Overview:
Structure probing data (DMS and 2A3) for a 177-nucleotide construct. The reactions ran in a buffer of 150 mM KOAc, 10 mM MgCl2 and 150 mM bicine (pH 8.5), at 24 C. For DMS, 4,384 sequencing reads were counted. 2A3 is a SHAPE reagent: it acylates the 2'-hydroxyl of flexible nucleotides of all four kinds. 2A3 adducts were read by reverse transcription with SuperScript II with manganese. It was measured as part of the RMDB library OK2TST. Values cover nucleotides 27 to 126.

[RMDB]
RNA sequence: GGGAACGACUCGAGUAGAGUCGAAAAGGGGGCACGUAAACGCCAAACCCGACGAGAAUCAUCAGCAGGCCCGUGACCGAGGGGCAUGGGUCGAGACCCUCGAGGCAGGCGAAGCAGGGGACGGCGAGCUAUGAGCACUAUUCGUAGUGCUCAUAGCAAAAGAAACAACAACAACAAC
Reactivity to DMS in 0.01 (KOAc 150mM, MgCl2 10mM, bicine 150mM(pH8.5), 24C), signal-to-noise 5, nucleotides 027 to 126: g000g020g000g010g020c100a070c120g010u020a050a090a130c100g010c020c010a030a200a260c080c010c020g000a120c060g010a100g010a080a070u010c090a150u000c070a110g010c150a150g000g000c030c010c020g040u000g010a140c050c030g010a120g010g010g000g000c030a010u010g000g010g010u000c010g010a120g000a090c120c060c010u010c020g000a120g000g000c080a090g000g000c010g010a080a110g010c050a120g010g000g010g010a090c140g010g010c060g010a120
Reactivity to 2A3 in 0.01 (KOAc 150mM, MgCl2 10mM, bicine 150mM(pH8.5), 24C), signal-to-noise 2, nucleotides 027 to 126: g000g000g010g020g000c050a010c030g020u070a060a110a000c040g000c000c020a080a050a060c030c030c000g020a050c050g020a020g050a060a060u100c040a020u020c020a060g050c000a020g020g060c000c000c000g010u020g040a210c020c050g060a100g040g100g020g000c010a020u020g000g000g000u010c000g000a000g010a020c000c030c000u020c020g010a070g020g010c050a020g000g060c030g030a040a010g020c040a010g000g000g030g020a020c040g000g040c020g000a010